[RMDB]
RNA sequence: GGGAACGACUCGAGUAGAGUCGAAAAGAAAGAAAUCAAAGCGGAUUCUAGUCUAAUCGGAGAGACUAGCAAUAUCGAAUAACUCGUUCUUGAUCCGUAUUAGAUCUAACUGAGGGAUGAGUAGAAAGGGUUACUUAGUGUUCGCACUAAGUAACCCAAAAGAAACAACAACAACAAC
Reactivity to 2A3 in 0.01 (KOAc 150mM, MgCl2 10mM, bicine 150mM(pH8.5), 24C), signal-to-noise 2, nucleotides 027 to 126: g040a050a020a000g130a000a010a030u200c090a230a160a000g030c000g040g000a000u000u000c000u000a000g000u000c000u030a060a000u090c060g100g080a090g010a000g000a040c010u010a010g010c000a000a000u090a080u170c070g030a060a010u040a070a070c030u000c030g140u100u000c000u020u050g010a000u050c020c010g020u070a070u060u090a050g030a050u010c020u080a020a090c000u100g000a060g010g130g000a010u080g000a000g000u080a040g100a100a050a060
Reactivity to DMS in 0.01 (KOAc 150mM, MgCl2 10mM, bicine 150mM(pH8.5), 24C), signal-to-noise 1, nucleotides 027 to 126: g050a040a090a050g020a060a070a100u020c140a130a130a110g000c020g000g000a030u020u030c000u000a040g000u000c000u020a030a100u000c120g000g000a020g000a000g000a000c000u000a000g050c270a000a000u000a010u000c010g040a020a020u020a090a030c020u010c000g000u010u000c040u040u000g000a110u030c000c000g020u050a050u000u020a020g010a040u000c140u040a050a140c260u010g040a120g000g040g000a050u030g000a100g000u000a180g000a040a110a120
Background: The data come from the RNA Mapping Database (RMDB), library OK1LIB. Chemical mapping of a 177-nucleotide RNA with 2A3 and DMS. 2A3 adducts were read by reverse transcription with SuperScript II with manganese. For DMS the reverse transcriptase was MarathonRT. As a SHAPE reagent, 2A3 marks flexible, mostly unpaired nucleotides at the ribose 2'-OH. For 2A3, 1,552 sequencing reads were counted. The RNA was probed in 150 mM KOAc, 10 mM MgCl2 and 150 mM bicine (pH 8.5) at 24 C.